[RMDB]
RNA sequence: GGGAACGACUCGAGUAGAGUCGAAAAAUGGUCUGGAAAGAAGACUUAUACAACACUUCUUCAAGAAAAAGCUUAUGUUCAAGUUCAUCAGCCUACAAGGAAAGGCAUACUCAGGUGGAACACUCAGCAAUGUUUUAGCAUACUGCAACAACCUCUAAAUUUACUCGAAUUUCGAUUCGAGUAAAUUAAAAGAAACAACAACAACAAC
Reactivity to DMS in 0.01 (KOAc 150mM, MgCl2 10mM, bicine 150mM(pH8.5), 24C), signal-to-noise 2, nucleotides 027 to 156: a100u000g030g020u020c020u000g000g000a090a060a100g000a060a100g000a120c060u020u020a130u020a150c060a090a100c080a080c040u020u000c000u000u000c000a160a210g020a090a060a080a120a100g010c010u000u020a090u010g000u000u030c020a130a080g010u000u000c040a080u010c000a050g030c030c030u020a080c070a110a110g050g010a050a040a100g020g000c020a060u000a050c050u000c030a050g010g040u000g000g010a060a050c050a020c030u000c030a100g010c040a090a050u000g000u000u000u000u000a100g020c030a110u000a040c040u000g000c040a080a060c030a050a090c000c000u000c050u010a080
Reactivity to 2A3 in 0.01 (KOAc 150mM, MgCl2 10mM, bicine 150mM(pH8.5), 24C), signal-to-noise 4, nucleotides 027 to 156: a000u080g020g000u020c020u050g040g030a140a060a030g030a050a000g030a020c010u090u070a100u120a080c070a130a030c070a050c020u000u060c000u060u060c050a070a040g040a110a090a030a010a000g020c020u040u060a020u110g080u070u090c070a090a060g030u060u020c010a060u020c020a040g010c000c000u050a060c050a080a030g050g020a100a090a010g010g000c010a010u040a030c060u060c060a040g010g060u040g020g020a030a010c030a020c060u080c050a010g010c020a030a120u110g040u050u080u060u080a010g010c000a010u030a110c020u100g010c010a030a040c010a020a040c100c010u030c010u140a050